The data come from the RNA Mapping Database (RMDB), library RNAMAK. Structure probing data (2A3 and DMS) for a 207-nucleotide construct. The reactions ran in a buffer of 150 mM KOAc, 10 mM MgCl2 and 150 mM bicine (pH 8.5), at 24 C. DMS adducts were read by reverse transcription with MarathonRT.
[RMDB]
RNA sequence: GGGAACGACUCGAGUAGAGUCGAAAAGGUACUUCGGUACCAUUCAUCCGUAGGCAAUGGUCCCGCUAUCCGGACGUUGAAAUAGCUUUCGAAAGAGAGCUAUGGAGUCCGUGAUAGCGAAACAUUGCCUAAACGGGAGUACCGUCUUCGGACGGAAGUUUGAGUGUAAUUUCGAUUACACUCAAACAAAAGAAACAACAACAACAAC
Reactivity to 2A3 in 0.01 (KOAc 150mM, MgCl2 10mM, bicine 150mM(pH8.5), 24C), signal-to-noise 6, nucleotides 027 to 156: g010g010u020a000c040u100u160c300g130g010u000a000c000c000a010u100u090c030a090u030c000c010g010u010a020g000g000c010a010a010u010g010g050u180c060c070c000g000c000u000a000u000c000c010g000g000a000c000g220u250u070g020a000a020a000u000a000g000c000u010u010u000c020g040a060a100a050g000a010g000a000g000c010u000a000u010g000g000a020g000u000c000c000g000u030g000a010u000a000g000c000g000a000a000a000c000a000u000u010g000c000c000u010a010a010a000c010g000g010g010a060g070u040a140c010c000g000u000c010u030u050c210g110g000a010c010g010g020a030a030
Reactivity to DMS in 0.01 (KOAc 150mM, MgCl2 10mM, bicine 150mM(pH8.5), 24C), signal-to-noise 3, nucleotides 027 to 156: g010g000u000a000c000u000u000c230g040g030u000a010c000c010a150u010u000c060a080u000c000c010g030u000a030g000g000c000a010a020u000g000g000u000c050c030c050g040c000u000a020u000c000c020g010g010a020c020g010u000u000g010a170a180a010u000a000g010c000u010u000u010c000g010a240a150a300g010a030g010a010g000c000u000a000u000g000g010a230g000u000c000c000g020u000g000a010u000a010g000c000g020a010a010a010c010a010u000u000g000c000c000u000a000a010a050c000g010g010g020a190g000u000a110c000c000g010u000c010u000u000c300g080g020a020c010g010g000a030a040
As a SHAPE reagent, 2A3 marks flexible, mostly unpaired nucleotides at the ribose 2'-OH.
For DMS, 8,650 sequencing reads were counted.